Structure probing data (DMS and 2A3) for a 177-nucleotide construct. 2A3 adducts were read by reverse transcription with SuperScript II with manganese. For 2A3, 4,084 sequencing reads were counted. It was measured as part of the RMDB library OK1LIB. The reactions ran in a buffer of 150 mM KOAc, 10 mM MgCl2 and 150 mM bicine (pH 8.5), at 24 C.

RNA sequence: GGGAACGACUCGAGUAGAGUCGAAAAGGUCGGGACGAUUAUGGGUACAGUCCCGGUCACACAAUGGUGCGUGCACCUAGCCUGACCCAGAUCUAGAUAAGCACUUUGCACAGAAGGACUUAAUCCAACUGUCUUAGGAGUUCGCUCCUAAGACAGUAAAAGAAACAACAACAACAAC
Reactivity to DMS in 0.01 (KOAc 150mM, MgCl2 10mM, bicine 150mM(pH8.5), 24C), signal-to-noise 3, nucleotides 027 to 126: g040g030u000c000g000g020g010a000c000g000a210u020u020a130u010g000g000g000u020a210c070a300g000u010c010c000c030g060g000u020c020a100c120a080c060a050a040u000g000g010u000g000c030g000u000g000c010a020c000c000u000a060g010c040c010u030g010a140c000c010c020a040g000a060u020c140u000a050g000a010u000a020a030g020c130a050c010u000u000u010g000c090a040c070a200g000a090a040g000g000a050c070u000u000a130a110u000c020c070a050
Reactivity to 2A3 in 0.01 (KOAc 150mM, MgCl2 10mM, bicine 150mM(pH8.5), 24C), signal-to-noise 2, nucleotides 027 to 126: g000g000u020c000g000g000g000a000c000g000a030u060u040a060u130g020g020g000u100a080c000a020g000u000c000c000c000g000g000u000c000a000c000a000c010a000a080u040g010g000u030g000c050g010u050g010c010a010c000c000u000a020g040c020c000u000g020a060c000c000c000a030g000a050u040c010u040a030g030a070u020a010a040g020c010a000c000u000u010u030g010c020a010c020a020g070a010a040g080g070a010c020u070u110a060a010u010c000c000a010